[RMDB]
The record gives the reactivity of an RNA of 177 nucleotides to DMS and 2A3. Values cover nucleotides 27 to 126. In probing experiments dimethyl sulfate is read out at A N1 and C N3, which are open when not base-paired. The DMS profile rests on 1,974 reads. For DMS the reverse transcriptase was MarathonRT. The 2A3 profile rests on 3,897 reads. The RNA was probed in 150 mM KOAc, 10 mM MgCl2 and 150 mM bicine (pH 8.5) at 24 C.

RNA sequence: GGGAACGACUCGAGUAGAGUCGAAAAGUCAUUAUGUUCGCAUAAUGACAAAUAUAAGGGACUAUAUAAAACCUGAUAGCCGUCCAAGAUCAUGUAUCGGCAAAAACAGACGAUUCGUCGUCUGUAAGGAGAAUACGGUAUUCGUACCGUAUUCUCCAAAAGAAACAACAACAACAAC
Reactivity to DMS in 0.01 (KOAc 150mM, MgCl2 10mM, bicine 150mM(pH8.5), 24C), signal-to-noise 2, nucleotides 027 to 126: g010u000c000a000u000u000a000u000g010u000u020c220g040c010a020u000a000a000u000g010a020c000a060a090a080u010a060u010a070a080g040g010g010a100c080u000a040u000a130u000a080a070a100a120c010c010u000g010a110u010a090g000c020c020g020u010c060c040a130a130g000a090u000c150a080u000g000u020a050u020c000g040g020c060a050a040a040a120a010c000a020g000a020c000g010a040u000u000c170g030u000c000g010u010c000u000g000u000a030a070
Reactivity to 2A3 in 0.01 (KOAc 150mM, MgCl2 10mM, bicine 150mM(pH8.5), 24C), signal-to-noise 4, nucleotides 027 to 126: g000u000c000a000u000u000a010u000g030u040u080c210g000c090a000u000a020a000u020g000a000c000a010a140a000u090a000u010a050a050g060g010g030a040c070u000a000u020a030u070a300a140a030a050c000c010u030g050a120u120a070g020c010c010g010u020c050c020a060a020g080a170u160c060a070u160g080u100a040u090c020g020g000c020a060a010a020a010a030c010a000g000a010c010g000a000u030u070c210g060u010c000g000u010c100u000g000u010a020a060